[RMDB]
RNA sequence: GGGAACGACUCGAGUAGAGUCGAAAAUGUGAACCAUGUCAGGUCCGGAAGGAAGCAGCAUUAAGCAGUGUUCUCAUGUGCCGCGAGUCGCCUGGCCCGAGCUAACUAUCAGGGUAACGCAGAUGAUUGCAUGUCGAUGUGAGGUGCGCGACACUAACAUUCGAAUACUCUUCGGAGUAUUCGAAUGAAAAGAAACAACAACAACAAC
Reactivity to DMS in 0.01 (KOAc 150mM, MgCl2 10mM, bicine 150mM(pH8.5), 24C), signal-to-noise 3, nucleotides 027 to 156: u010g010u000g030a140a180c030c050a110u000g000u000c040a140g010g000u030c020c020g010g000a150a070g000g010a080a300g010c030a070g020c020a100u000u010a100a160g050c100a100g030u000g000u000u000c020u000c020a120u000g000u010g020c020c010g050c000g010a090g000u000c030g010c030c010u000g020g010c010c040c030g020a130g000c030u010a090a130c020u020a150u020c090a180g040g010g000u000a050a090c050g000c020a060g010a120u000g010a080u000u000g010c060a070u000g000u000c070g010a160u020g000u000g010a050g020g000u000g000c030g040c020g030a110c020a070c060u000a060a210

The record gives the reactivity of an RNA of 207 nucleotides to DMS. Conditions: 150 mM KOAc, 10 mM MgCl2 and 150 mM bicine (pH 8.5), 24 C. For DMS, 4,532 sequencing reads were counted. The data come from the RNA Mapping Database (RMDB), library ARCHII.